An RNA of 177 nucleotides, treated with DMS and read out base by base. The data come from the RNA Mapping Database (RMDB), library OK2TST. For DMS the reverse transcriptase was MarathonRT. Reactivities are given for positions 27 through 126.

RNA sequence: GGGAACGACUCGAGUAGAGUCGAAAAAAUAGCUACGGCUAUGUAGAAGGGGAAUUACAACCCAUAGAUCCAGAGUCACCGUUUCCUUUUAUGGAAGAAAAACUGGAGUUGGGGGAUCGUAUUAUUGCUACGUGUCACGUUUCGACGUGACACGUAGAAAAGAAACAACAACAACAAC
Reactivity to DMS in 0.01 (KOAc 150mM, MgCl2 10mM, bicine 150mM(pH8.5), 24C), signal-to-noise 1, nucleotides 027 to 126: a100a060u000a000g010c000u010a150c240g010g000c000u000a010u020g020u000a160g010a130a110g000g010g000g010a110a060u020u010a040c090a110a130c010c010c000a050u010a050g030a110u000c000c010a050g030a180g010u000c140a120c140c120g000u020u000u000c000c000u000u010u030u000a040u020g000g000a050a030g040a010a000a020a110a100c020u000g010g010a080g000u000u010g040g000g000g000g000a110u020c100g010u000a020u010u000a050u000u010g000
Record summary:
The reactions ran in a buffer of 150 mM KOAc, 10 mM MgCl2 and 150 mM bicine (pH 8.5), at 24 C.